Chemical mapping of a 207-nucleotide RNA with 2A3.
RNA sequence: GGGAACGACUCGAGUAGAGUCGAAAAGCUGGCGGGCCCCUUCGCAUGGUUCGACGGUGAACCUGGUCAGGUCGGGAACGAAGCAGCCAUAGUCGUUUAGGGCCAGUGCCGGAGUAAGGCUCGCCUCCCGGUAAAGGUUACCCGUUCGCGGGUAACCGCUCUCAAGUCAGUUCGCUGACUUGAGAGCAAAAGAAACAACAACAACAAC
Reactivity to 2A3 in 0.01 (KOAc 150mM, MgCl2 10mM, bicine 150mM(pH8.5), 24C), signal-to-noise 2, nucleotides 027 to 156: g120c130u080g000g010c000g010g020g000c000c000c000c000u020u020c010g000c000a020u010g010g000u000u010c000g040a010c020g010g020u050g050a070a110c040c070u010g000g050u160c000a010g000g000u000c000g010g020g080a150a130c020g000a020a020g040c000a010g020c010c000a040u090a040g040u020c010g010u020u050u260a140g000g000g020c030c030a150g140u050g090c110c020g000g000a000g000u020a070a000g000g000c010u010c000g010c000c000u000c000c000c000g000g030u220a110a090a000g020g000u000u000a000c000c010c000g000u010u070c280g000c010g120g030g010u000a000a000c000c000